This 177-nucleotide RNA was probed chemically with 2A3 and DMS. 2A3 adducts were read by reverse transcription with SuperScript II with manganese. For 2A3, 928 sequencing reads were counted. The RNA was probed in 150 mM KOAc, 10 mM MgCl2 and 150 mM bicine (pH 8.5) at 24 C.

RNA sequence: GGGAACGACUCGAGUAGAGUCGAAAACUAAAAGCAACGGCAAACUGCGACCACUGGGUAUCCCCGCGUUGCGGGAUCGUAUUGUUCAGCGGGCCAUGCUGAUGGCGAUGGAGCCGAUAUGGGAGAGCCCUAAGCGCUAAUUCGUUAGCGCUUAGGGAAAAGAAACAACAACAACAAC
Reactivity to 2A3 in 0.01 (KOAc 150mM, MgCl2 10mM, bicine 150mM(pH8.5), 24C), signal-to-noise 1, nucleotides 027 to 126: c030u040a090a050a030a060g000c040a020a100c020g010g000c050a160a120a120c040u040g020c000g090a060c000c030a040c110u120g040g030g000u110a110u120c080c030c040c010g100c060g060u060u220g100c140g000g020g000a020u060c020g000u070a110u120u230g010u000u070c000a000g000c020g050g020g000c000c050a050u050g040c020u080g020a080u090g010g000c030g080a080u050g090g030a020g000c000c000g010a040u060a110u230g000g040g000a090g050a000g000
Reactivity to DMS in 0.01 (KOAc 150mM, MgCl2 10mM, bicine 150mM(pH8.5), 24C), signal-to-noise 2, nucleotides 027 to 126: c040u010a050a070a120a070g000c030a080a010c070g000g000c070a100a090a140c130u000g000c040g000a060c040c060a090c090u010g010g000g010u000a050u000c090c000c010c070g030c110g030u000u010g030c010g030g000g010a020u000c080g020u000a070u020u020g000u000u010c030a050g020c080g020g000g010c060c080a060u000g000c050u000g020a080u000g010g010c030g010a050u030g010g000a160g000c060c010g000a100u000a060u000g010g000g000a080g000a120g010